[RMDB]
Record summary:
Chemical mapping of a 207-nucleotide RNA with DMS and 2A3. 2A3 adducts were read by reverse transcription with SuperScript II with manganese. The 2A3 profile rests on 3,278 reads. For DMS the reverse transcriptase was MarathonRT. The DMS profile rests on 4,357 reads. The data come from the RNA Mapping Database (RMDB), library M2RFPK. The RNA was probed in 150 mM KOAc, 10 mM MgCl2 and 150 mM bicine (pH 8.5) at 24 C.
RNA sequence: GGGAACGACUCGAGUAGAGUCGAAAAUUAAUGAAGCAAAUCUCCAAACGCCAACGAUGAGCGUUUCGCCAUCGCCGCUUAAGGCUUUUGCCGAGGCUGCUUGAGCCUUGUUACCAAAGAAAAGCCGAAAACCCAAAUGUCUUCGGACAUUUGGGAACAAUCAGACUAUCUUCGGAUAGUCUGAUUGAAAAGAAACAACAACAACAAC
Reactivity to DMS in 0.01 (KOAc 150mM, MgCl2 10mM, bicine 150mM(pH8.5), 24C), signal-to-noise 2, nucleotides 027 to 156: u000u000a070a110u000g000a140a050g000c010a010a040a040u000c010u000c020c020a070a100a030c040g000c000c010a090a040c020g020a010u000g010a120g050c000g000u000u000u010c040g050c000c000a010u000c020g010c000c050g000c030u010u010a140a080g010g000c020u010u010u000u010g030c010c020g000a080g020g020c010u000g010c050u020u020g020a110g000c010c020u010u010g000u000u000a250c060c060a070a130a120g030a090a060a060a090g020c080c040g000a060a060a050a120c000c010c000a000a020a030u000g020u000c000u000u020c300g030g010a010c000a020u010u000u010g000g040g000a020a040
Reactivity to 2A3 in 0.01 (KOAc 150mM, MgCl2 10mM, bicine 150mM(pH8.5), 24C), signal-to-noise 4, nucleotides 027 to 156: u140u090a040a110u130g080a070a020g030c040a050a040a110u060c050u040c060c060a090a140a060c070g020c050c030a070a040c050g050a040u030g030a050g080c010g040u060u120u190c080g000c000c010a020u020c010g040c060c020g070c040u110u090a120a070g000g000c000u000u020u030u040g020c020c020g010a010g010g000c030u040g020c020u050u100g080a010g010c000c000u010u030g030u100u110a080c030c020a060a020a000g050a020a070a020a000g040c020c040g060a070a050a040a060c010c000c020a000a000a000u010g010u000c000u020u060c140g080g000a000c000a010u010u000u000g000g010g000a000a000